Description: The record gives the reactivity of an RNA of 170 nucleotides to DMS and 2A3. DMS adducts were read by reverse transcription with MarathonRT. The RNA was probed in 150 mM KOAc, 10 mM MgCl2 and 150 mM bicine (pH 8.5) at 24 C.
RNA sequence: GGGAACGACUCGAGUAGAGUCGAAAAAGAGAUCCCGAGGGGGCUUCAGGCUAAAGAGUGGACGAUUUUCGGGGAAGGUCUCCCAAGAAGAACCAGGAACACCUCAAGAAGAGGAGACUUCCCCAAGUAGGAAUCCAGUUCGCUGGAUUCAAAAGAAACAACAACAACAAC
Reactivity to DMS in 0.01 (KOAc 150mM, MgCl2 10mM, bicine 150mM(pH8.5), 24C), signal-to-noise 5, nucleotides 027 to 129: a060g000a110g030a030u030c000c000c000g000a080g010g020g020g030g000c080u000u000c090a000g000g000c010u030a040a080a090g000a070g000u000g020g020a110c010g000a030u050u000u060u010c130g010g000g010g010a050a020g020g010u010c000u000c020c020c040a100a100g000a100a060g040a070a080c080c050a050g000g020a100a100c080a130c040c020u030c050a070a130g020a110a090g010a120g000g000a030g020a030c040u000u000c010c020c000c030a020a030g030u010a090g020
Reactivity to 2A3 in 0.01 (KOAc 150mM, MgCl2 10mM, bicine 150mM(pH8.5), 24C), signal-to-noise 7, nucleotides 027 to 129: a000g100a010g000a030u020c000c000c000g000a040g010g020g010g000g000c010u080u060c040a020g000g010c010u060a070a050a010g060a030g030u080g000g010a010c020g010a030u020u070u090u150c080g010g000g000g010a000a020g050g060u010c000u000c010c000c010a000a010g040a040a010g030a040a050c040c020a010g030g020a030a050c070a090c050c010u060c050a040a080g070a070a020g070a090g010g020a010g010a000c000u010u020c000c000c010c000a040a030g020u050a020g150